[RMDB]
Chemical mapping of a 177-nucleotide RNA with 2A3 and DMS. The reactions ran in a buffer of 150 mM KOAc, 10 mM MgCl2 and 150 mM bicine (pH 8.5), at 24 C. The data come from the RNA Mapping Database (RMDB), library M2PK50. 2A3 adducts were read by reverse transcription with SuperScript II with manganese.
RNA sequence: GGGAACGACUCGAGUAGAGUCGAAAACUUCGGUAGUUCGCUACCGAAGAAAAGACAGACUACGGAACUGUCAAAAACACAACAAAAGUGUAAAAGCGUAGAAAAGUUCCCACUUCGGUGGGAACAAGUUAUGCGUUAUGUUCGCAUAACGCAUAACAAAAGAAACAACAACAACAAC
Reactivity to 2A3 in 0.01 (KOAc 150mM, MgCl2 10mM, bicine 150mM(pH8.5), 24C), signal-to-noise 4, nucleotides 027 to 126: c000u000u000c000g010g000u010a010g010u030u050c250g020c110u000a000c000c000g000a000a000g000a010a060a010a000g000a000c010a000g000a020c000u020a010c030g030g110a190a010c010u000g000u000c010a010a010a000a020a010c050a030c040a180a010c050a040a150a100a070g000u000g000u040a080a140a020a000g030c000g000u010a010g040a050a120a010a020g010u000u000c000c010c000a000c000u020u050c180g060g000u010g000g000g000a000a000c000a000a000
Reactivity to DMS in 0.01 (KOAc 150mM, MgCl2 10mM, bicine 150mM(pH8.5), 24C), signal-to-noise 3, nucleotides 027 to 126: c010u000u000c000g000g020u000a000g000u010u030c270g010c010u000a000c000c000g000a010a010g000a030a090a100a110g000a010c010a000g000a090c010u000a050c000g000g030a120a030c000u010g010u010c000a050a120a090a080a020c010a010c010a040a170c180a050a070a100a110g000u000g000u000a080a060a040a020g030c000g000u000a010g000a290a100a090a150g010u000u000c000c010c000a010c010u000u010c090g020g000u000g000g010g000a000a000c000a030a010
The 2A3 profile rests on 7,234 reads.